[RMDB]
RNA sequence: GGGAACGACUCGAGUAGAGUCGAAAAUAUCAAUAUGAUACCUCUGUGUGUUCAGCAGACCCUCGCUGGAUUCAUGGAACCUCUUCUACACGUCGACAAGAUAUGUUUCUUGUAUUUAUGCCAGCCCCAUUGAUUAGAAGUUCGCUUCUAAUCAAUGAAAAGAAACAACAACAACAAC
Reactivity to 2A3 in 0.01 (KOAc 150mM, MgCl2 10mM, bicine 150mM(pH8.5), 24C), signal-to-noise 6, nucleotides 027 to 126: u060a000u030c020a050a140u190a150u300g020a020u040a080c020c020u000c010u010g010u000g000u000g010u020u030c010a010g000c010a030g060a300c050c020c010u030c070g000c010u010g000g020a030u000u030c010a010u030g030g010a020a040c000c020u050c010u070u010c010u060a050c030a010c080g070u050c020g050a020c030a060a030g050a050u090a070u270g130u030u060u010c010u000u040g030u060a140u020u150u020a090u120g050c010c020a020g020c040c010c000
Reactivity to DMS in 0.01 (KOAc 150mM, MgCl2 10mM, bicine 150mM(pH8.5), 24C), signal-to-noise 6, nucleotides 027 to 126: u000a030u000c030a130a130u010a110u000g000a060u000a040c100c050u010c020u000g020u000g010u000g010u000u000c030a060g000c030a100g000a170c070c060c040u010c100g020c020u000g000g000a030u000u000c020a020u000g010g010a040a260c050c030u000c050u000u000c020u000a050c050a060c080g010u000c050g000a050c050a020a040g010a040u010a070u010g010u000u000u000c020u000u000g000u000a060u010u000u000a060u010g010c030c030a090g000c010c010c030